[RMDB]
RNA sequence: GGGAACGACUCGAGUAGAGUCGAAAAUUCGGGGUGGAUUAGUGGCGAACGGGAGAGUAACACGUGGGCAAUCUGCCCUUCACUCUGGGACAAGCCCUGGAAACGGGAUCUAAUACCGGAUACGAGCAAUUUUAUUAUAAUUCGUUAUAAUAAAAUUAAAAGAAACAACAACAACAAC
Reactivity to 2A3 in 0.01 (KOAc 150mM, MgCl2 10mM, bicine 150mM(pH8.5), 24C), signal-to-noise 4, nucleotides 027 to 126: u060u040c020g010g000g010g020u060g010g040a080u090u110a100g040u060g090g050c010g030a080a020c020g040g030g010a060g010a010g040u100a090a040c030a000c140g050u090g000g020g010c010a040a110u070c070u150g030c000c000c000u010u020c010a030c020u040c030u020g010g010g030a040c040a090a040g020c000c000c000u010g030g050a020a090a030c040g020g020g020a020u050c040u120a070a050u080a200c020c010g020g020a040u100a110c080g020a030g090c020
Reactivity to DMS in 0.01 (KOAc 150mM, MgCl2 10mM, bicine 150mM(pH8.5), 24C), signal-to-noise 4, nucleotides 027 to 126: u030u030c050g010g010g010g010u010g000g010a050u020u020a060g020u020g020g020c060g020a100a090c080g000g000g000a090g000a070g010u020a080a090c110a110c190g020u030g000g020g020c010a090a070u050c140u010g000c010c000c010u010u000c070a030c090u020c040u000g000g000g000a120c160a100a130g000c100c000c010u000g010g000a030a080a130c060g000g010g000a060u000c070u020a080a070u040a070c020c010g000g000a050u000a100c070g010a130g000c090
Source: RMDB library OK1LIB, as collected in RNAgym.
This 177-nucleotide RNA was probed chemically with 2A3 and DMS.
For 2A3 the reverse transcriptase was SuperScript II with manganese.
For DMS, 6,118 sequencing reads were counted.
The RNA was probed in 150 mM KOAc, 10 mM MgCl2 and 150 mM bicine (pH 8.5) at 24 C.